[RMDB]
RNA sequence: GGGAACGACUCGAGUAGAGUCGAAAACUGGGGGAGGGCGUAGAACCUGCCGGGAUGGAGCCUCGCAGGCACCAGGAAGUCCCGCGCCCCUUCCGGCGUGGAUCGGAUGAAGGUCGGGGUCUCGAUCUGUCAUGCGUAGAUUCGUCUACGCAUGACAAAAAGAAACAACAACAACAAC
Reactivity to DMS in 0.01 (KOAc 150mM, MgCl2 10mM, bicine 150mM(pH8.5), 24C), signal-to-noise 1, nucleotides 027 to 126: c060u000g020g000g020g020g020a040g000g000g010c050g000u000a070g000a090a040c030c010u010g000c030c050g010g000g010a090u010g020g000a060g030c060c070u010c270g000c130a150g020g030c020a020c050c030a130g020g000a080a120g030u000c050c000c000g060c090g000c030c000c030c090u000u000c070c070g010g000c010g000u000g000g020a040u020c010g000g050a050u000g010a090a050g080g020u000c040g010g000g000g000u000c040u000c020g000a070u010c070